Structure probing data (2A3 and DMS) for a 177-nucleotide construct.
For DMS the reverse transcriptase was MarathonRT.
The 2A3 profile rests on 1,921 reads.
It was measured as part of the RMDB library RFMREP.
Reactivities are given for positions 27 through 126.
For DMS, 2,790 sequencing reads were counted.
For 2A3 the reverse transcriptase was SuperScript II with manganese.

RNA sequence: GGGAACGACUCGAGUAGAGUCGAAAAAUGUCCCGUGGCUAGGUAUACCGCGUUGGGGUAAGACACAUUUGGGUGCCCUGCCAUGCCUGUCAUCCAGAAGUUCUUUCUGGCACUGACUCGUGGGGCUCAACAAUAAAUGCUUCGGCAUUUAUUGUUGAAAAGAAACAACAACAACAAC
Reactivity to 2A3 in 0.01 (KOAc 150mM, MgCl2 10mM, bicine 150mM(pH8.5), 24C), signal-to-noise 2, nucleotides 027 to 126: a000u100g090u040c010c000c000g040u050g030g000c030u020a020g070g000u050a050u070a280c030c020g030c040g110u060u160g030g020g010g060u080a030a090g180a020c010a000c000a120u070u110u170g060g000g000u050g000c000c000c000u020g000c020c000a000u000g030c020c010u020g000u000c000a130u240c010c010a010g010a010a040g060u220u170c080u060u060u010c000u000g000g000c040a090c020u010g020a010c000u020c050g050u080g000g030g020g000c010u000
Reactivity to DMS in 0.01 (KOAc 150mM, MgCl2 10mM, bicine 150mM(pH8.5), 24C), signal-to-noise 2, nucleotides 027 to 126: a090u020g000u000c000c000c010g020u010g010g000c030u010a030g020g010u000a050u000a140c020c040g010c150g020u000u010g030g000g000g010u010a120a120g000a090c050a040c060a110u000u010u010g020g010g010u000g000c010c000c020u000g020c020c020a050u000g020c020c030u000g000u000c000a000u010c010c000a010g000a010a030g010u000u000c140u010u000u000c010u000g000g020c020a010c030u000g000a020c010u000c170g010u010g020g000g010g010c200u010